Structure probing data (DMS and 2A3) for a 170-nucleotide construct.
RNA sequence: GGGAACGACUCGAGUAGAGUCGAAAAAAACCAGAGAGUACAGCUGAUCAAGAGACUUAUGGUGGAGCUUCAGUGUGUCUCUAUUGCCGUGCGCAUAUAGAACAUCCUGAUGUCUCUGGUGUUUGUAAUAGGACUCUGUUCGCAGAGUCCAAAAGAAACAACAACAACAAC
Reactivity to DMS in 0.01 (KOAc 150mM, MgCl2 10mM, bicine 150mM(pH8.5), 24C), signal-to-noise 1, nucleotides 027 to 129: a060a020a060c060c010a080g020a070g030a090g060u070a020c140a080g010c060u000g000a000u010c090a110a030g040a000g050a000c000u010u010a060u020g030g040u020g000g040a050g040c040u000u040c030a020g010u030g010u000g000u020c160u020c000u030a010u000u030g020c000c050g000u040g040c000g000c010a030u000a020u020a000g010a000a000c030a000u010c210c000u000g010a060u030g030u030c020u020c010u060g000g000u030g010u030u030u000g000u090a000a070u010a180
Reactivity to 2A3 in 0.01 (KOAc 150mM, MgCl2 10mM, bicine 150mM(pH8.5), 24C), signal-to-noise 4, nucleotides 027 to 129: a000a000a000c050c010a030g020a010g000a000g020u150a130c030a030g040c060u050g040a080u080c050a090a030g050a020g080a160c010u090u060a030u180g080g020u030g050g060a020g000c000u000u000c010a000g010u010g000u010g000u000c010u030c000u130a000u030u020g000c020c020g290u230g060c110g000c040a010u070a000u020a300g000a000a010c010a030u020c000c000u010g000a000u040g140u040c000u000c020u010g000g000u010g020u010u080u160g130u060a120a110u020a070

For 2A3 the reverse transcriptase was SuperScript II with manganese.
Values cover nucleotides 27 to 129.
For DMS, 11,573 sequencing reads were counted.
For DMS the reverse transcriptase was MarathonRT.
The reactions ran in a buffer of 150 mM KOAc, 10 mM MgCl2 and 150 mM bicine (pH 8.5), at 24 C.